Source: RMDB library OK3TST, as collected in RNAgym. Chemical mapping of a 207-nucleotide RNA with 2A3 and DMS.
RNA sequence: GGGAACGACUCGAGUAGAGUCGAAAACUGUCCUGUGUGGAAGUACGUGAGUACUUCACGCUCUACGGGAGUAGAGCCACACAGAUCGUGGAGCGAUGUGUUGGAACUACUCCCGUAGUUCACGUAUGACUCACGUCAUACCAACACGACAGCCACGGGUAUAUAAUGCCUUCGGGCAUUAUAUACCAAAAGAAACAACAACAACAAC
Reactivity to 2A3 in 0.01 (KOAc 150mM, MgCl2 10mM, bicine 150mM(pH8.5), 24C), signal-to-noise 6, nucleotides 027 to 156: c000u010g010u030c020c020u050g020u020g030u040g080g030a110a100g020u190a020c010g000u010g010a000g010u070a300c010u020u060c020a010c010g000c010u010c000u000a000c010g000g010g010a000g010u000a000g000a020g010c000c000a010c000a000c000a010g170a090u040c020g030u170g270g180a160g150c020g010a020u010g010u010g020u120u270g020g010a080a080c000u000a000c000u000c000c020c020g000u000a000g000u000u010c010a010c010g010u020a020u070g010a000c000u010c010a010c000g000u000c010a050u110a120c010c000a010a020c000a000c010g010a000c000a010g050c020c000a080c060g060
Reactivity to DMS in 0.01 (KOAc 150mM, MgCl2 10mM, bicine 150mM(pH8.5), 24C), signal-to-noise 1, nucleotides 027 to 156: c030u000g010u000c030c020u000g050u020g050u000g060g000a080a150g040u000a000c020g000u010g000a300g030u030a040c030u000u000c110a070c030g000c090u000c000u000a030c000g030g060g000a270g030u000a020g040a090g010c000c040a000c030a000c060a030g010a110u000c020g050u000g010g000a220g000c050g020a140u000g000u000g000u000u000g050g010a050a030c000u000a010c020u000c070c050c070g050u000a000g030u000u000c100a090c100g010u010a040u000g000a060c030u000c260a100c080g040u000c050a120u000a080c020c030a040a110c010a030c050g020a020c010a040g010c030c020a120c160g050